[RMDB]
RNA sequence: GGGAACGACUCGAGUAGAGUCGAAAAGCGCCAUCUGCCUCGCCCUGACCAGUGACGGCGAUCACUGGCGUGGCCGUCCGUCGUCAUGGUCUGCGGCUCUCGACGCACUCGCCUAUGGCGCCGACAAAGCGCGAGUAGUCUUCGGACUACUCGCGCUAAAAGAAACAACAACAACAAC
Reactivity to 2A3 in 0.01 (KOAc 150mM, MgCl2 10mM, bicine 150mM(pH8.5), 24C), signal-to-noise 1, nucleotides 027 to 126: g000c000g000c010c010a050u020c090u160g010c000c050u110c150g000c010c000c000u030g010a030c030c000a160g120u030g110a000c070g030g030c010g000a060u100c030a000c140u230g090g000c110g160u050g140g000c020c000g010u070c010c000g000u000c000g000u000c000a030u030g010g010u020c000u000g010c140g070g020c020u010c010u100c050g140a120c070g000c000a020c010u030c010g010c000c000u010a000u060g000g000c010g070c020c000g070a030c050a050a080